[RMDB]
RNA sequence: GGGAACGACUCGAGUAGAGUCGAAAAGAAUUUUGUUCGAGCCUCCAUGUCUGUUCUCUGUGACAUUACAUUUGAUUCGAGUGUCAGCGUGGGUUACUCUUCCGGCUACAAUACGUCAUCCUCUUAAGCACCUAUUAUCGUUCGCGAUAAUAGGUGCAAAAGAAACAACAACAACAAC
Reactivity to DMS in 0.01 (KOAc 150mM, MgCl2 10mM, bicine 150mM(pH8.5), 24C), signal-to-noise 1, nucleotides 027 to 126: g000a100a030u000u010u020u000g020u010u000c040g020a060g000c030c030u000c000c050a030u000g030u000c060u010g020u000u000c010u000c010u010g020u020g030a060c080a080u000u000a070c200a110u000u010u000g000a170u000u010c120g000a100g010u000g000u000c060a010g010c060g060u010g000g030g010u020u030a060c060u010c030u000u010c030c050g010g020c010u000a050c100a030a060u010a050c090g020u000c030a070u000c000c050u010c120u000u000a040a230
Reactivity to 2A3 in 0.01 (KOAc 150mM, MgCl2 10mM, bicine 150mM(pH8.5), 24C), signal-to-noise 2, nucleotides 027 to 126: g050a060a100u120u130u120u210g050u060u030c040g000a000g000c000c000u000c000c020a070u080g070u010c000u050g000u050u050c020u000c040u040g160u020g060a020c030a070u020u130a110c050a120u190u180u170g170a200u100u140c070g000a000g030u040g030u070c000a020g030c030g030u030g000g040g030u080u060a070c020u020c030u090u000c010c000g060g000c060u010a030c020a050a100u020a110c050g000u020c010a060u030c000c040u020c030u040u020a050a000
Annotation
The record gives the reactivity of an RNA of 177 nucleotides to DMS and 2A3. It was measured as part of the RMDB library OK2TST. DMS adducts were read by reverse transcription with MarathonRT.